[RMDB]
RNA sequence: GGGAACGACUCGAGUAGAGUCGAAAAGAUAUGGAUGCGAAUAGCUAAUCGUAGUCUUCGGAAACGAAGAAUACGAUGCUACGCAUCCUAAGUCAAAAGAGAGGCAACACUUCGGUGUUGCCUCUCACUCUCACUGUGAGUUCGCUCACAGUGAGAGAAAAGAAACAACAACAACAAC
Reactivity to DMS in 0.01 (KOAc 150mM, MgCl2 10mM, bicine 150mM(pH8.5), 24C), signal-to-noise 2, nucleotides 027 to 126: g000a040u000a300u010g000g000a000u010g000c000g010a120a210u000a030g000c010u020a180a080u010c000g000u020a020g000u000c010u000u000c000g000g020a130a130a150c000g010a010a010g000a010a030u000a010c020g020a020u000g020c000u000a030c000g010c000a000u000c000c010u000a010a080g010u000c040a130a100a140a120g000a020g000a010g000g020c000a010a020c000a000c000u000u010c200g040g000u000g000u000u020g020c000c000u000c000u000c010a010